[RMDB]
RNA sequence: GGGAACGACUCGAGUAGAGUCGAAAAUAGGGCCUGGGCUUUCUGUGUUAAAUGCCAUAAUGAUAUAUUGGCAGCAACAGACCCCAGUGAGGCUUUCGAGAAAUUCGUAAGUCUCUUUGCUACUUUAUACGCCGCUAGUUCGCUAGCGGCAAAAGAAACAACAACAACAAC
Reactivity to DMS in 0.01 (KOAc 150mM, MgCl2 10mM, bicine 150mM(pH8.5), 24C), signal-to-noise 2, nucleotides 027 to 129: u020a020g020g000g000c040c010u010g040g000g050c050u000u050u000c020u000g010u000g030u000u000a160a140a150u050g010c000c030a010u000a060a040u050g020a020u000a090u000a090u070u020g020g010c020a070g000c160a120a010c010a010g010a070c300c000c000c000a000g010u020g000a030g030g000c000u000u090u020c000g060a030g000a170a170a200u030u080c030g030u030a080a000g000u010c000u000c020u000u000u000g000c020u030a050c000u000u000u030a060u000a170c200
Reactivity to 2A3 in 0.01 (KOAc 150mM, MgCl2 10mM, bicine 150mM(pH8.5), 24C), signal-to-noise 4, nucleotides 027 to 129: u110a020g060g000g000c000c000u000g000g000g000c000u040u210u030c020u000g030u000g090u120u170a120a070a050u040g000c000c000a030u090a070a050u230g180a000u000a000u010a020u230u030g020g010c010a000g030c040a030a050c000a000g010a000c010c020c000c000a010g050u030g020a000g000g000c000u020u010u000c020g020a030g040a080a290a130u220u000c000g000u000a000a000g000u000c010u000c000u090u060u020g020c000u000a070c000u050u070u030a120u060a080c060